Record summary
This 177-nucleotide RNA was probed chemically with DMS and 2A3. The DMS profile rests on 4,778 reads. It was measured as part of the RMDB library VIROID. Conditions: 150 mM KOAc, 10 mM MgCl2 and 150 mM bicine (pH 8.5), 24 C.
RNA sequence: GGGAACGACUCGAGUAGAGUCGAAAAUCACGGUAAACAAAACCUUGCUUUCCUGUCUUCCUUAAGACAGAAGGGUUAUCAUUAAGAUAACCACAGGCGCAGGUCCUGAAAUCGUGAUGAGGCAUAAGAUUUGUAUACUCUUCGGAGUAUACAAAUCAAAAGAAACAACAACAACAAC
Reactivity to DMS in 0.01 (KOAc 150mM, MgCl2 10mM, bicine 150mM(pH8.5), 24C), signal-to-noise 5, nucleotides 027 to 126: u000c010a010c000g010g000u000a020a090a250c250a010a000a030a000c010c000u010u010g030c060u010u000u010c070c000u000g000u010c000u000u000c300c190u000u030a020a010g000a010c010a000g000a140a070g010g000g010u000u000a000u000c000a190u000u010a120a170g000a010u000a000a000c000c000a060c000a000g000g000c150g010c010a000g000g000u010c000c000u000g000a030a020a000u000c000g010u000g000a020u000g010a100g000g020c140a070u010a080a110
Reactivity to 2A3 in 0.01 (KOAc 150mM, MgCl2 10mM, bicine 150mM(pH8.5), 24C), signal-to-noise 5, nucleotides 027 to 126: u010c000a000c000g000g020u040a020a000a020c010a010a010a000a000c010c000u060u210g010c050u140u240u170c030c000u000g000u010c010u040u060c080c070u170u300a020a000g000a000c000a010g040a090a040g060g000g000u010u000a000u010c030a040u160u260a200a070g000a000u000a000a010c010c000a060c010a060g010g000c040g000c030a000g000g010u080c000c010u010g000a020a000a010u010c010g000u000g000a010u020g020a040g080g080c080a120u080a250a070